Structure probing data (2A3 and DMS) for a 207-nucleotide construct. For DMS, 3,312 sequencing reads were counted.
RNA sequence: GGGAACGACUCGAGUAGAGUCGAAAAUUGAUCGAGAUUAAGCGACUGUAUGCUUUACAAGAAGAUUCUGAAGUGGAGCCGAUAGCCAUAAUUUGUGAUGGCAUAGAAAGCAACAUGAAACAGUUAUUUGCUAUAUUGCCUCCUGACUGUGCAAGAGAAACCAGGAUGAAUUCGUUCAUCCUGGUUUAAAAGAAACAACAACAACAAC
Reactivity to 2A3 in 0.01 (KOAc 150mM, MgCl2 10mM, bicine 150mM(pH8.5), 24C), signal-to-noise 1, nucleotides 027 to 156: u090u120g060a040u080c070g010a010g030a050u030u080a070a040g000c010g050a030c060u070g060u120a070u090g040c000u040u000u050a010c050a040a000g080a060a000g030a100u120u000c010u100g010a110a000g000u040g010g040a010g000c040c000g070a050u000a020g010c000c060a010u020a100a080u100u120u050g050u130g080a050u040g030g000c000a010u020a030g100a000a070a000g010c020a000a030c030a060u120g070a010a120a000c040a010g080u100u080a090u080u080u040g000c000u030a090u010a140u100u080g000c000c040u090c040c070u010g070a020c010u070g030u060g030c050a070a010g140a000g070
Reactivity to DMS in 0.01 (KOAc 150mM, MgCl2 10mM, bicine 150mM(pH8.5), 24C), signal-to-noise 2, nucleotides 027 to 156: u000u000g020a130u000c050g020a130g020a080u020u010a110a190g030c020g030a090c060u000g050u000a160u010g020c020u000u010u010a050c040a120a150g000a000a170g000a150u000u000c050u010g010a050a170g010u010g000g030a170g020c020c080g010a160u000a050g020c030c000a050u000a060a130u000u000u000g010u000g010a050u030g000g010c010a070u010a060g000a040a040a060g010c040a020a080c030a070u010g000a160a060a070c060a050g030u000u000a130u000u000u000g030c010u020a170u000a090u000u000g010c010c030u000c020c010u000g010a090c000u050g040u010g020c050a010a100g020a220g000